[RMDB]
RNA sequence: GGGAACGACUCGAGUAGAGUCGAAAAAUUGCAGUAUGGCUUAUUACUGUAAAGCCGGUGUCUUGUUAAAUUGGUUGCCAAUGACAUAAUUACACUUUGCUGCAUAUGUGUAGUUGAGUUUGGUGGAUAGCAUAUUUGUCCAAUACGGCAAGUAAGCCCCCAAUUCUAUUUUCGAAUAGAAUUGGGGAAAAGAAACAACAACAACAAC
Reactivity to DMS in 0.01 (KOAc 150mM, MgCl2 10mM, bicine 150mM(pH8.5), 24C), signal-to-noise 2, nucleotides 027 to 156: a130u000u000g030c000a070g020u000a060u000g060g040c120u000u000a110u000u000a080c060u010g010u000a030a050a130g020c040c030g020g000u000g000u010c050u000u010g000u000u000a030a100a150u000u000g030g020u000u010g010c000c000a050a110u010g020a110c050a090u000a040a040u000u000a020c020a020c010u000u000u000g000c040u000g030c060a090u000a000u000g010u000g020u000a040g030u010u000g000a170g010u000u000u000g020g010u000g010g010a050u010a110g000c050a120u010a040u000u000u000g000u000c010c030a090a140u010a040c070g000g000c020a020a040g020u010a030a110g010c060
Reactivity to 2A3 in 0.01 (KOAc 150mM, MgCl2 10mM, bicine 150mM(pH8.5), 24C), signal-to-noise 4, nucleotides 027 to 156: a010u050u040g000c010a010g010u100a050u090g060g000c010u070u040a060u090u140a230c060u180g030u110a090a020a040g050c000c000g050g010u020g020u020c020u050u100g050u040u070a110a150a130u080u040g070g000u120u120g080c000c000a030a030u070g020a030c000a050u150a090a060u150u070a030c010a010c020u090u150u190g020c030u040g040c040a010u050a060u170g080u010g000u050a050g020u020u030g040a040g060u010u090u130g050g020u040g070g030a070u100a040g010c050a010u020a090u090u070u040g020u030c020c010a070a070u150a130c100g010g000c000a010a020g050u050a030a000g000c020

An RNA of 207 nucleotides, treated with DMS and 2A3 and read out base by base. Values cover nucleotides 27 to 156. The data come from the RNA Mapping Database (RMDB), library OK3TST. High 2A3 reactivity points to a flexible backbone, as in loops and unpaired stretches. The 2A3 profile rests on 1,761 reads. DMS adducts were read by reverse transcription with MarathonRT. Values are in units of 0.01, from 0 to 300, in steps of 10.